[RMDB]
Chemical mapping of a 207-nucleotide RNA with DMS and 2A3.
DMS adducts were read by reverse transcription with MarathonRT.
RNA sequence: GGGAACGACUCGAGUAGAGUCGAAAAUGCAGUAUUUAGACUAUGAGAACAGUCAUAUUCCAGGAUAGACACAUCCAAGUUGAGAAGCACAACACAGGAUUUUCUGCAUCCAUGCCAGGAGGCCUGGUGGUAACAGAGAACCCAGGCAGCUUUGGGAGGUAAUGCGUAUAUUCGUAUACGCAUUACCAAAAGAAACAACAACAACAAC
Reactivity to DMS in 0.01 (KOAc 150mM, MgCl2 10mM, bicine 150mM(pH8.5), 24C), signal-to-noise 2, nucleotides 027 to 156: u000g040c030a080g030u000a050u000u000u010a110g020a060c030u000a070u010g010a190g000a100a080c140a030g020u010c000a090u000a170u000u000c050c050a140g010g000a100u000a070g000a220c080a000c090a080u010c000c020a070a250g010u000u000g010a140g000a150a050g020c070a090c040a030a060c050a080c030a110g000g000a060u000u000u000u000c050u020g000c020a150u010c060c040a060u000g020c050c020a080g010g000a160g000g020c000c030u010g030g020u000g020g000u010a090a140c080a190g000a200g000a080a100c030c010c010a060g010g050c030a120g000c010u000u000u000g020g010g040a240
Reactivity to 2A3 in 0.01 (KOAc 150mM, MgCl2 10mM, bicine 150mM(pH8.5), 24C), signal-to-noise 4, nucleotides 027 to 156: u030g000c010a010g050u120a090u120u160u150a060g040a040c020u020a030u220g070a060g040a190a030c050a040g040u020c020a050u030a090u170u090c030c040a020g000g020a020u030a050g080a070c040a020c030a120u010c010c000a060a020g030u030u050g070a080g030a100a050g050c070a040c010a090a040c040a010c020a070g050g000a020u080u010u060u020c010u020g010c000a010u000c030c010a040u100g070c010c010a030g070g000a010g000g060c010c010u010g010g020u080g040g050u070a130a030c040a050g110a010g020a130a020c010c000c000a000g020g020c010a010g020c010u090u110u080g020g030g020a100

The RNA was probed in 150 mM KOAc, 10 mM MgCl2 and 150 mM bicine (pH 8.5) at 24 C. The data come from the RNA Mapping Database (RMDB), library OK3TST.